RNA sequence: GGGAACGACUCGAGUAGAGUCGAAAAUGAACGCUUUCGAAGGAAAGCUUGAUCAGCUAAUCUUCUGCAACGCCAUUACGAGGACUGCCCUUAGAGGCUCAUGGCGAUAGGUCACCCCGCCGGUCGGUUAAGAAUCAGCGAUUCGUCGCUGAUUCAAGCUUACCUCUACGUUCGCGUAGAGGUAAGCAAAAGAAACAACAACAACAAC
Reactivity to 2A3 in 0.01 (KOAc 150mM, MgCl2 10mM, bicine 150mM(pH8.5), 24C), signal-to-noise 1, nucleotides 027 to 156: u140g000a060a010c040g000c030u000u000u000c020g110a130a060g110g030a100a050a000g060c060u040u110g080a110u020c030a000g030c020u050a070a150u080c070u050u060c060u060g000c020a040a140c050g000c020c010a060u050u110a060c080g010a010g070g050a070c020u060g000c000c000c000u060u040a100g030a110g150g000c000u030c040a020u010g000g000c010g060a050u070a040g040g010u030c040a040c000c000c000c060g000c000c030g020g120u120c060g050g000u110u070a100a020g000a010a000u000c000a000g000c000g000a020u040u070c200g060u000c010g010c000u000g000a000u000u000c000a000a000

Annotation
An RNA of 207 nucleotides, treated with 2A3 and read out base by base. The reactions ran in a buffer of 150 mM KOAc, 10 mM MgCl2 and 150 mM bicine (pH 8.5), at 24 C.